Structure probing data (2A3 and DMS) for a 207-nucleotide construct. Source: RMDB library OK3TST, as collected in RNAgym.

RNA sequence: GGGAACGACUCGAGUAGAGUCGAAAAGUAUAGAAGCAUGAGACCGCAUGCGUUAUACGAUGAAUCACGGUCGAAUCCGUUGUGCGAAAGCACUUCGGUAAUGCAUAUCGGUAGACAGAUCGGCCCGGAUCAGCUACCGUAAUUAGUACGGGCAAGAAUGAUAUAGUAUGUUCGCAUACUAUAUCAUAAAAGAAACAACAACAACAAC
Reactivity to 2A3 in 0.01 (KOAc 150mM, MgCl2 10mM, bicine 150mM(pH8.5), 24C), signal-to-noise 5, nucleotides 027 to 156: g080u060a060u050a160g110a200a020g000c000a000u010g020a010g010a100c010c010g050c050a040u120g090c010g030u090u060a110u050a080c100g020a040u120g100a050a080u120c070a020c100g000g000u000c020g020a010a020u020c000c000g010u000u010g000u000g000c010g030a070a010a010g000c000a000c000u000u000c000g000g000u020a030a010u070g010c010a020u070a050u230c000g010g000u010a010g050a130c120a050g000a010u000c000g060g000c010c000c000g000g000a000u000c010a010g000c000u000a000c000c000g010u010a020a060u090u070a030g090u050a040c020g000g000g010c020a010a020g120a080
Reactivity to DMS in 0.01 (KOAc 150mM, MgCl2 10mM, bicine 150mM(pH8.5), 24C), signal-to-noise 4, nucleotides 027 to 156: g030u000a090u000a080g030a110a170g040c010a020u000g000a300g010a060c050c030g030c040a050u000g000c030g030u000u010a070u000a100c060g030a130u010g020a090a100u000c090a050c010g000g000u000c020g020a110a160u000c000c000g040u000u000g000u000g000c000g000a160a120a280g030c000a030c010u000u000c000g010g020u000a020a020u000g030c020a140u000a130u000c030g000g000u010a040g010a120c050a160g010a120u000c010g010g000c020c010c040g000g010a140u000c010a150g010c020u000a020c010c010g010u000a010a040u010u000a120g010u000a070c050g040g010g020c060a110a070g000a100